[RMDB]
Structure probing data (2A3 and DMS) for a 170-nucleotide construct. For 2A3, 1,544 sequencing reads were counted.
RNA sequence: GGGAACGACUCGAGUAGAGUCGAAAAUUGUACUGAUGACCGUUGUGUGUUACAUUGUGCUAAUUUCAAUGUAUUGUUUGCUAUGACCAUGCCUAAGACUUGUUUCGGACCCAUAGUCCGAAAGAUCACCCGUUCGCGUUCGCGCGAACGAAAAGAAACAACAACAACAAC
Reactivity to 2A3 in 0.01 (KOAc 150mM, MgCl2 10mM, bicine 150mM(pH8.5), 24C), signal-to-noise 2, nucleotides 027 to 129: u030u080g010u000a050c000u020g010a090u030g200a170c000c140g050u120u060g000u010g000u000g000u010u000a000c000a000u000u110g000u000g110c040u130a290a180u090u170u160c110a170a060u140g040u080a050u130u140g000u020u200u090g070c000u050a000u100g000a000c000c110a000u060g120c030c000u020a020a020g080a080c000u060u080g050u060u110u000c000g010g010a040c020c080c080a020u240a040g000u000c000c000g000a000a000a000g040a000u120c180a110c000c020
Reactivity to DMS in 0.01 (KOAc 150mM, MgCl2 10mM, bicine 150mM(pH8.5), 24C), signal-to-noise 3, nucleotides 027 to 129: u030u020g070u000a090c070u030g010a160u020g000a180c000c000g070u050u000g060u030g010u000g020u040u020a040c000a030u040u000g030u010g000c150u100a040a110u020u010u010c070a060a070u030g000u010a040u050u080g010u070u000u000g000c070u000a090u040g020a120c120c050a100u030g020c070c020u050a070a060g020a020c110u000u000g000u020u050u000c000g000g050a040c000c120c270a090u060a110g000u070c000c010g030a000a000a000g000a100u040c060a090c000c010

For DMS, 6,341 sequencing reads were counted.
The reactions ran in a buffer of 150 mM KOAc, 10 mM MgCl2 and 150 mM bicine (pH 8.5), at 24 C.